[RMDB]
RNA sequence: GGGAACGACUCGAGUAGAGUCGAAAAUACCUUGAGUAUUGCUGCAUUCAGUUUAGCGUGCAUGCUCUUGGCUAUUCUCAUAGUGAUUGUCAAAUUUGGAGUUACUUAUUCGUCAAUUCAAUAUUUAAAAAGGUGCCGAUGUUCGCAUCGGCACCAACAGCUGAAAUAUGUUCGCAUAUUUCAGCUGAAAAGAAACAACAACAACAAC
Reactivity to DMS in 0.01 (KOAc 150mM, MgCl2 10mM, bicine 150mM(pH8.5), 24C), signal-to-noise 1, nucleotides 027 to 156: u000a040c000c000u010u010g000a030g030u000a010u000u000g010c010u010g040c040a220u000u010c170a300g000u000u010u010a160g030c030g020u000g000c000a040u000g000c000u010c010u000u000g020g060c030u000a090u010u010c030u000c010a180u010a110g010u000g020a160u020u000g010u000c010a030a030a130u000u000u000g020g020a210g000u020u000a050c060u000u030a050u000u000c070g020u010c020a080a100u000u020c010a030a060u000a080u000u000u000a070a040a060a110a110g020g040u010g010c000c000g010a030u010g020u010u010c300g020c040a030u020c000g000g000c020a010c000c010a010a050
Reactivity to 2A3 in 0.01 (KOAc 150mM, MgCl2 10mM, bicine 150mM(pH8.5), 24C), signal-to-noise 5, nucleotides 027 to 156: u120a030c000c000u000u000g000a000g000u020a050u150u170g010c000u010g000c010a080u040u200c070a140g250u100u170u300a070g010c040g010u020g000c010a000u000g000c000u000c000u000u010g000g000c010u030a040u030u020c030u020c020a050u080a070g140u080g060a060u010u040g030u040c030a030a030a060u080u060u070g120g020a200g150u130u130a090c010u050u060a030u090u070c040g000u010c010a020a020u080u020c020a050a110u090a230u200u250u300a160a150a040a020a030g000g000u000g000c000c000g000a000u000g020u060u070c150g000c080a000u010c000g000g020c000a000c000c000a000a000

Structure probing data (DMS and 2A3) for a 207-nucleotide construct. Reactivities are given for positions 27 through 156. For 2A3, 2,236 sequencing reads were counted. DMS adducts were read by reverse transcription with MarathonRT. The data come from the RNA Mapping Database (RMDB), library M2RFPK.